[RMDB]
RNA sequence: GGGAACGACUCGAGUAGAGUCGAAAAUACCUGGCUGAAAGAGCAGAACAGGAAUUCAUUCGUGGGAUGGAGCACGGAAUGGACUCCAUAUUCUGACCAAAGCAUCAAAGUGAGGAUAAGCCUAAAAAGUGAGAAGGGUUUUCGAACCCUUCUCACUAAAAGAAACAACAACAACAAC
Reactivity to DMS in 0.01 (KOAc 150mM, MgCl2 10mM, bicine 150mM(pH8.5), 24C), signal-to-noise 2, nucleotides 027 to 126: u010a060c020c000u000g010g000c000u000g010a040a150a170g000a200g090c000a000g010a000a090c180a210g000g020a020a080u000u000c000a020u000u000c030g040u000g000g060g000a190u000g000g000a120g030c040a020c030g000g030a000a030u030g020g000a000c010u000c010c000a020u040a300u020u000c000u000g000a140c030c010a040a160a110g000c020a010u000c250a030a090a140g000u000g020a140g000g040a140u000a110a050g000c010c000u010a130a050a050a140
Reactivity to 2A3 in 0.01 (KOAc 150mM, MgCl2 10mM, bicine 150mM(pH8.5), 24C), signal-to-noise 4, nucleotides 027 to 126: u160a060c020c000u010g030g000c010u010g060a090a030a030g120a100g110c030a000g000a030a030c060a050g000g000a000a000u010u030c000a000u000u010c020g040u020g000g130g020a180u290g150g070a110g080c000a010c020g070g120a000a020u010g010g000a010c000u030c010c000a020u050a020u190u020c000u020g030a030c010c020a030a020a090g090c010a040u130c070a110a220a040g070u090g070a010g020g010a050u070a120a050g000c000c000u060a090a100a030a010